[RMDB]
RNA sequence: GGGAACGACUCGAGUAGAGUCGAAAAGCGAUGAGCAUAGGUUCCUGCCACUUUGCCAGGCCAAUGAAUAACCAUAGGGACUUGCAGUUGGUAGCGACUGUAGUUGGUGUUUGAACCCCAAGUAUUAAAUAGUAUGGGCAUUCGUGCCCAUACUAUUAAAAGAAACAACAACAACAAC
Reactivity to DMS in 0.01 (KOAc 150mM, MgCl2 10mM, bicine 150mM(pH8.5), 24C), signal-to-noise 2, nucleotides 027 to 126: g000c050g020a120u010g000a160g000c050a100u010a090g010g020u010u000c180c000u000g010c040c050a030c110u000u000u010g010c040c040a070g000g000c020c020a020a050u000g010a120a130u010a110a120c150c040a050u010a130g010g020g000a040c030u000u000g020c000a020g010u000u000g020g020u010a060g030c080g010a050c040u000g000u010a090g010u010u000g000g020u010g010u000u010u000g030a090a170c060c000c010c030a090a100g020u010a090u010u000a070